[RMDB]
RNA sequence: GGGAACGACUCGAGUAGAGUCGAAAACUCCUAUAAUUACAAUGUCUAUAGGGACUGUUUUACUGCCUGUGUAUUUUCUGCUAGAGAGUUAGCAAUGUUAGAGCUAGAACAGAUUAGAAUUUCUAAACAGUAUCAUGCACAGUUGGUGUGAGUGAUAGUAAUUAAUCAUGUUCGCAUGAUUAAUUACAAAAGAAACAACAACAACAAC
Reactivity to 2A3 in 0.01 (KOAc 150mM, MgCl2 10mM, bicine 150mM(pH8.5), 24C), signal-to-noise 4, nucleotides 027 to 156: c020u040c000c010u050a080u120a170a140u230u190a100c080a120a140u150g040u020c040u050a080u130a070g040g010g020a040c040u060g100u020u070u080u100a050c050u060g050c010c010u020g030u010g020u030a050u040u090u030u020c020u010g000c020u040a020g010a030g000a020g170u100u020a000g010c040a060a030u060g040u120u120a060g000a020g070c000u030a000g040a120a050c050a010g060a120u060u090a040g050a130a090u060u100u040c030u050a120a080a000c010a020g030u050a020u060c020a010u030g030c000a010c010a050g020u060u050g040g030u050g020u040g040a060g010u090g040a020u090a070
Reactivity to DMS in 0.01 (KOAc 150mM, MgCl2 10mM, bicine 150mM(pH8.5), 24C), signal-to-noise 3, nucleotides 027 to 156: c090u000c000c010u010a090u010a070a120u010u010a150c070a130a130u000g010u000c040u000a110u010a100g030g020g010a090c060u000g010u000u000u000u000a080c060u000g030c120c010u010g020u000g020u000a050u000u010u000u000c030u000g040c020u000a110g000a110g000a080g020u000u000a050g030c020a120a070u000g020u000u010a100g030a180g040c120u000a080g020a060a070c020a060g000a120u010u000a070g010a110a090u000u000u000c030u000a070a060a060c050a070g000u000a050u010c030a030u000g010c020a030c010a080g010u010u000g010g010u000g010u000g000a090g010u000g000a080u000a140